Structure probing data (2A3 and DMS) for a 177-nucleotide construct. The reactions ran in a buffer of 150 mM KOAc, 10 mM MgCl2 and 150 mM bicine (pH 8.5), at 24 C. For 2A3 the reverse transcriptase was SuperScript II with manganese. DMS adducts were read by reverse transcription with MarathonRT.
[RMDB]
RNA sequence: GGGAACGACUCGAGUAGAGUCGAAAAAAUGUUCUGUUCGCAGAACAUUAAGCUGGUGUCCCGACCACGCUGGAUGUCAGUACACGAAGUGCCAGAUCGGGAAUGCCUCCGGCUUCGGCCGGAGGAACCAGUGGAUGAAGUUCGCUUCAUCCACUGGAAAAGAAACAACAACAACAAC
Reactivity to 2A3 in 0.01 (KOAc 150mM, MgCl2 10mM, bicine 150mM(pH8.5), 24C), signal-to-noise 2, nucleotides 027 to 126: a000a000u010g000u020u000c020u010g010u020u070c240g020c100a010g000a010a000c000a000u020u010a050a010g080c080u040g000g030u030g050u040c000c000c010g040a030c020c010a060c090g040c040u040g030g050a130u120g070u180c080a040g070u150a070c060a000c130g130a150a020g030u050g210c020c010a030g020a120u050c020g020g010g050a040a020u070g060c000c000u000c020c000g030g020c000u010u090c160g070g010c000c030g000g000a010g010g000a000a000
Reactivity to DMS in 0.01 (KOAc 150mM, MgCl2 10mM, bicine 150mM(pH8.5), 24C), signal-to-noise 2, nucleotides 027 to 126: a030a010u000g030u000u000c000u000g010u010u010c170g050c020a010g010a030a000c010a000u010u010a060a130g020c080u010g010g000u000g010u010c000c010c010g000a080c030c040a100c140g000c010u010g010g010a110u000g020u010c070a170g020u010a130c080a040c050g000a160a070g030u000g000c060c080a090g010a120u000c010g020g010g000a070a100u010g000c010c000u000c010c020g010g010c010u000u000c210g050g030c000c000g010g000a010g000g010a010a040